[RMDB]
RNA sequence: GGGAACGACUCGAGUAGAGUCGAAAACAGGCGAUCAUAAUAAUCACGUUCUGCAGUGCAGUGAUGUGCAUCAAAGGAGACGGGAACGAUGAUGGUAAGUCAUUCGACAGCCUGAAGGAUGAGAUAGUACGAACCUAAACUUCGGUUUAGGUUCGUAAAAAGAAACAACAACAACAAC
Reactivity to 2A3 in 0.01 (KOAc 150mM, MgCl2 10mM, bicine 150mM(pH8.5), 24C), signal-to-noise 2, nucleotides 027 to 126: c040a000g000g040c010g040a030u080c050a110u060a240a050u110a070a020u120c060a000c020g020u050u020c000u050g000c010a010g040u020g060c000a000g000u080g070a110u050g060u050g060c000a000u060c010a060a130a040g060g020a090g090a040c050g000g010g000a030a050c010g070a080u030g000a010u050g020g060u100a090a030g050u000c050a040u180u090c080g020a020c030a000g010c020c020u030g020a050a000g150g000a060u090g040a060g020a050u070a050g060
Reactivity to DMS in 0.01 (KOAc 150mM, MgCl2 10mM, bicine 150mM(pH8.5), 24C), signal-to-noise 3, nucleotides 027 to 126: c070a020g000g010c020g020a110u010c120a050u010a070a120u010a160a080u000c000a040c030g010u000u010c010u000g020c100a160g000u000g000c020a000g000u000g010a140u010g030u010g000c080a030u010c060a070a090a100g000g010a090g010a080c080g000g000g000a040a050c070g010a100u000g020a000u010g020g020u010a070a120g000u030c000a070u010u000c130g020a100c060a220g020c000c010u000g000a100a090g020g000a100u000g020a100g000a090u010a120g020
Chemical mapping of a 177-nucleotide RNA with 2A3 and DMS.
The reactions ran in a buffer of 150 mM KOAc, 10 mM MgCl2 and 150 mM bicine (pH 8.5), at 24 C.
For DMS the reverse transcriptase was MarathonRT.